This 177-nucleotide RNA was probed chemically with 2A3 and DMS. The 2A3 profile rests on 1,293 reads. The data come from the RNA Mapping Database (RMDB), library OK2TST. Reactivities are given for positions 27 through 126. Conditions: 150 mM KOAc, 10 mM MgCl2 and 150 mM bicine (pH 8.5), 24 C. For DMS, 11,573 sequencing reads were counted.
RNA sequence: GGGAACGACUCGAGUAGAGUCGAAAAGUUGCUCAGCAUCGUUGAUGCCCUUGGUAUCCUUGCGGAAAGUGUUAUCAAGCUGAGUUUCUUGAUCUACCCUUCCUGCCUGCUUAGAAGUCAGUCCAAAUAAAAUGCUCCUAUUCGUAGGAGCAUUUUAAAAAGAAACAACAACAACAAC
Reactivity to 2A3 in 0.01 (KOAc 150mM, MgCl2 10mM, bicine 150mM(pH8.5), 24C), signal-to-noise 1, nucleotides 027 to 126: g010u010u010g000c000u000c010a000g000c000a070u140c170g180u110u060g020a010u000g010c000c020c000u000u080g020g010u070a060u080c010c020u050u120g040c080g140g070a070a030a010g040u090g010u100u140a050u050c010a040a000g010c010u020g000a010g020u020u000u010c000u020u020g020a030u010c000u070a140c000c000c030u000u030c020c010u030g070c000c000u020g030c020u000u020a050g030a130a010g020u010c020a000g030u010c030c030a000a000a080
Reactivity to DMS in 0.01 (KOAc 150mM, MgCl2 10mM, bicine 150mM(pH8.5), 24C), signal-to-noise 7, nucleotides 027 to 126: g010u000u010g010c010u000c030a070g020c020a120u010c160g030u010u010g000a040u000g010c030c150c030u000u010g020g010u010a070u000c020c030u000u010g020c260g020g010a100a030a030g010u010g010u000u000a030u000c020a030a080g020c110u000g000a060g010u000u000u000c010u010u000g000a110u010c120u000a110c030c020c020u000u000c020c010u000g010c060c020u000g010c030u000u010a100g010a070a080g010u000c050a070g000u000c030c040a050a080a180